Notes: The record gives the reactivity of an RNA of 177 nucleotides to 2A3 and DMS. For 2A3, 7,627 sequencing reads were counted. Conditions: 150 mM KOAc, 10 mM MgCl2 and 150 mM bicine (pH 8.5), 24 C. High 2A3 reactivity points to a flexible backbone, as in loops and unpaired stretches. For DMS, 6,229 sequencing reads were counted.

[RMDB]
RNA sequence: GGGAACGACUCGAGUAGAGUCGAAAAUGGGAAGGCCCCUCCAAGGCCGCUGGCGACACGCAUCAGGUAGGCUCGGUCUUCCAGACCCCCGUUCUGACUACGUUCGACCAGACGAUCGUUCAGGCUCGUUCACUGAAUGAUUCGUCAUUCAGUGAACAAAAGAAACAACAACAACAAC
Reactivity to 2A3 in 0.01 (KOAc 150mM, MgCl2 10mM, bicine 150mM(pH8.5), 24C), signal-to-noise 4, nucleotides 027 to 126: u100g030g000g010a020a020g010g000c000c020c000c000u010c040c050a090a050g020g000c000c010g000c030u010g020g010c030g080a100c050a040c250g030c020a090u080c030a100g100g140u210a060g080g010c020u040c120g000g000u000c000u080u000c010c000a020g050a070c010c020c000c000c010g030u110u040c010u030g040a050c050u070a020c050g020u010u030c010g080a130c070c020a040g040a120c010g020a050u030c020g000u050u030c010a020g080g000c040u070c140
Reactivity to DMS in 0.01 (KOAc 150mM, MgCl2 10mM, bicine 150mM(pH8.5), 24C), signal-to-noise 6, nucleotides 027 to 126: u020g010g000g020a060a040g000g010c000c010c080c100u010c060c050a150a130g010g020c040c020g000c030u000g000g000c080g010a130c140a070c100g010c080a090u000c060a100g010g010u010a090g030g020c180u000c130g020g010u000c000u000u000c060c040a070g000a220c060c020c050c030c050g010u000u000c020u000g000a070c160u010a080c080g000u000u010c020g000a100c060c050a100g000a100c020g000a040u010c020g030u000u000c010a070g010g020c180u010c170